[RMDB]
RNA sequence: GGGAACGACUCGAGUAGAGUCGAAAAGAAAGAAAGAGAAUCGGAUUGCGCAGUGGUAAGGGUUCACGACGGGUCUCCUCUGCCGACACUUCGAUGAUCUACUACGCCGUACGCAGCAAAAUCCUAACCGAAAUUUUAAGUUCGCUUAAAAUUUCGGAAAAGAAACAACAACAACAAC
Reactivity to DMS in 0.01 (KOAc 150mM, MgCl2 10mM, bicine 150mM(pH8.5), 24C), signal-to-noise 2, nucleotides 027 to 126: g000a080a120a060g020a080a120a060g000a050g000a150a070u020c060g040g020a010u000u000g000c120g000c060a070g010u050g000g000u020a090a070g000g000g010u010u000c040a060c050g030a140c130g000g000g050u000c000u010c000c050u000c060u000g000c020c000g030a070c080a020c050u000u000c000g000a060u000g000a000u010c070u020a130c020u010a090c140g060c010c040g030u030a020c050g000c020a090g000c050a020a050a050a040u000c030c000u000a070a180
Reactivity to 2A3 in 0.01 (KOAc 150mM, MgCl2 10mM, bicine 150mM(pH8.5), 24C), signal-to-noise 2, nucleotides 027 to 126: g050a030a060a000g070a010a070a000g050a010g030a010a020u080c000g000g030a020u000u040g000c010g000c010a020g020u020g000g010u060a010a050g080g000g000u010u010c050a030c070g070a010c060g020g000g020u000c020u030c000c000u030c010u020g000c010c000g020a060c000a000c010u040u030c000g010a010u030g000a000u000c000u010a020c000u020a010c010g000c000c010g020u030a000c020g000c030a010g000c000a010a010a000a060u000c000c020u030a040a030